RNA sequence: GGGAACGACUCGAGUAGAGUCGAAAAGUACCUACGUUGAUAUAAACCCUAAAGAAAGAUGUAACGGCGGGGUGUACUACGAUUUUCAGUCCGACAUCUCGGAGACUGAAAUCGCGAAUGUCGCCGAGCGUAUUUGAUAUUUCGAUAUCAAAUACGCAAAAGAAACAACAACAACAAC
Reactivity to DMS in 0.01 (KOAc 150mM, MgCl2 10mM, bicine 150mM(pH8.5), 24C), signal-to-noise 7, nucleotides 027 to 126: g010u000a100c020c050u000a080c110g010u000u000g010a090u010a050u000a090a100a100c020c020c010u000a070a170a120g010a110a110a160g000a060u010g010u010a090a160c020g010g010c080g010g000g010g000u010g020u010a080c040u000a050c010g010a010u000u000u010u010c000a010g000u000c000c000g010a060c290a090u020c210u000c050g010g010a110g010a060c000u000g000a010a010a010u000c000g010c060g000a110a080u000g000u000c040g010c010c010g000a140
Reactivity to 2A3 in 0.01 (KOAc 150mM, MgCl2 10mM, bicine 150mM(pH8.5), 24C), signal-to-noise 4, nucleotides 027 to 126: g030u040a050c010c010u020a050c070g110u100u140g070a030u050a020u040a160a180a090c000c030c000u080a110a140a040g110a080a120a010g080a070u150g030u120a140a030c020g000g000c000g000g010g000g010u050g000u020a030c030u000a000c020g010a020u040u020u050u060c010a000g000u000c000c000g040a040c060a250u050c090u040c200g080g020a100g030a050c000u000g000a010a000a000u000c000g000c000g050a170a150u130g070u190c020g000c000c010g020a030
The record gives the reactivity of an RNA of 177 nucleotides to DMS and 2A3. Conditions: 150 mM KOAc, 10 mM MgCl2 and 150 mM bicine (pH 8.5), 24 C. The data come from the RNA Mapping Database (RMDB), library OK2TST. Reactivities are rounded to 0.1 and cut off at 0 and 3. For DMS, 7,927 sequencing reads were counted.